[RMDB]
RNA sequence: GGGAACGACUCGAGUAGAGUCGAAAAUAAUUUACUCAACAACUUCAACACUCUGUGUUCCACUUUGGCAAAUAAUGGUAUUGAAGUGCCAAUAUUUGGCGACAAUGGAAACCGUAACCCAACUGGAAUACUACCCAUUAUUCGUAAUGGGUAGUAUAAAAGAAACAACAACAACAAC
Reactivity to DMS in 0.01 (KOAc 150mM, MgCl2 10mM, bicine 150mM(pH8.5), 24C), signal-to-noise 5, nucleotides 027 to 126: u040a030a080u010u030u020a070c030u000c050a110a110c120a100a080c070u030u030c060a060a090c120a050c050u010c070u020g010u000g030u010u000c010c000a030c110u000u010u010g000g010c010a020a010a020u010a020a050u010g000g000u000a020u000u020g040a100a140g000u010g000c000c000a030a040u000a030u020u010u000g000g000c000g010a040c200a040a060u010g010g000a030a040a040c020c020g020u000a080a080c000c010c010a070a080c070u010g000g020a300
Reactivity to 2A3 in 0.01 (KOAc 150mM, MgCl2 10mM, bicine 150mM(pH8.5), 24C), signal-to-noise 9, nucleotides 027 to 126: u140a020a050u080u150u150a110c070u070c060a090a090c030a070a050c110u170u110c100a090a060c050a040c080u090c050u090g090u030g100u110u000c000c010a030c050u050u030u060g090g000c010a000a010a010u020a030a040u030g020g030u030a050u040u250g230a250a060g060u010g020c000c000a020a010u020a020u030u020u020g120g030c010g010a020c050a050a070u040g010g010a040a040a030c010c010g050u070a050a070c010c000c010a040a080c040u050g020g050a020